[RMDB]
RNA sequence: GGGAACGACUCGAGUAGAGUCGAAAAGAUAUGGAUCCCGUGCGAGAAGUGUUCGGAAACGAACAUACUUCGAUGAGCACAGGGAUCCUAAGUCAAAGCACGACGUGAGUUCGCUCACGUCGUGCAACUAGAUUAGAGUGUUCGCACUCUAAUCUAGAAAAGAAACAACAACAACAAC
Reactivity to DMS in 0.01 (KOAc 150mM, MgCl2 10mM, bicine 150mM(pH8.5), 24C), signal-to-noise 3, nucleotides 027 to 126: g000a020u000a020u010g000g000a000u000c000c000c000g010u000g000c000g010a020g010a000a010g000u000g000u010u000c000g010g010a010a010a030c000g020a020a010c000a050u010a040c020u000u000c000g020a230u020g010a240g000c000a000c000a130g030g000g020a000u000c000c000u000a000a050g010u000c000a150a160a150g010c000a010c000g000a030c000g040u010g010a030g020u000u020c300g000c000u000c000a000c000g000u000c000g020u000g010c010a020a030
Reactivity to 2A3 in 0.01 (KOAc 150mM, MgCl2 10mM, bicine 150mM(pH8.5), 24C), signal-to-noise 4, nucleotides 027 to 126: g010a000u030a010u060g010g010a010u000c000c010c010g000u000g000c030g030a210g000a020a000g030u010g000u000u010c010g020g020a000a000a010c010g000a010a000c000a020u100a040c010u000u010c020g180a300u300g020a010g000c060a050c270a290g000g000g000a010u000c000c000u000a010a000g000u010c010a080a120a090g000c010a010c030g010a000c020g030u000g010a020g040u120u280c300g050c210u000c010a000c000g000u010c000g000u010g000c000a000a010
Structure probing data (DMS and 2A3) for a 177-nucleotide construct. For DMS, 7,725 sequencing reads were counted. The reactions ran in a buffer of 150 mM KOAc, 10 mM MgCl2 and 150 mM bicine (pH 8.5), at 24 C. Reactivities are given for positions 27 through 126. It was measured as part of the RMDB library TTRDES. DMS adducts were read by reverse transcription with MarathonRT. High 2A3 reactivity points to a flexible backbone, as in loops and unpaired stretches.